Chemical mapping of a 177-nucleotide RNA with DMS and 2A3. The DMS profile rests on 1,290 reads. Reactivities are given for positions 27 through 126. The RNA was probed in 150 mM KOAc, 10 mM MgCl2 and 150 mM bicine (pH 8.5) at 24 C. The 2A3 profile rests on 1,390 reads. It was measured as part of the RMDB library 15KREP.
RNA sequence: GGGAACGACUCGAGUAGAGUCGAAAACAUGCAAGGCACUCUUUUGAAGUUGACUGUCGAUGUUGCUAACCCUAGCACUCCAGCCUACACUUUUACAACAGUGAAACCUGGCGCAGCAUUUAGUGUGGUCUGUACUUACGUUCGCGUAAGUACAGACAAAAGAAACAACAACAACAAC
Reactivity to DMS in 0.01 (KOAc 150mM, MgCl2 10mM, bicine 150mM(pH8.5), 24C), signal-to-noise 2, nucleotides 027 to 126: c070a020u000g030c050a040a050g000g000c020a040c040u000c070u000u000u010u000g010a110a030g040u000u010g000a070c030u000g010u000c070g000a030u010g030u010u010g000c040u020a120a130c150c120c070u010a110g020c040a100c080u000c040c020a030g020c020c020u000a130c120a030c030u000u010u000u030a060c280a110a100c180a040g000u010g000a030a020a070c240c010u020g000g000c130g010c090a050g030c020a070u000u000u010a050g040u000g000u000g000
Reactivity to 2A3 in 0.01 (KOAc 150mM, MgCl2 10mM, bicine 150mM(pH8.5), 24C), signal-to-noise 2, nucleotides 027 to 126: c020a000u100g030c020a050a000g030g000c000a010c040u020c040u000u090u130u240g120a100a050g010u100u080g070a070c000u020g030u120c030g020a050u070g040u130u020g000c030u040a070a080c000c030c010u020a010g000c030a010c010u000c030c000a000g000c000c020u060a030c010a010c020u030u030u070u170a070c070a220a020c040a000g000u010g000a070a020a020c000c030u000g000g000c020g000c050a030g010c000a030u050u120u100a020g010u050g060u070g090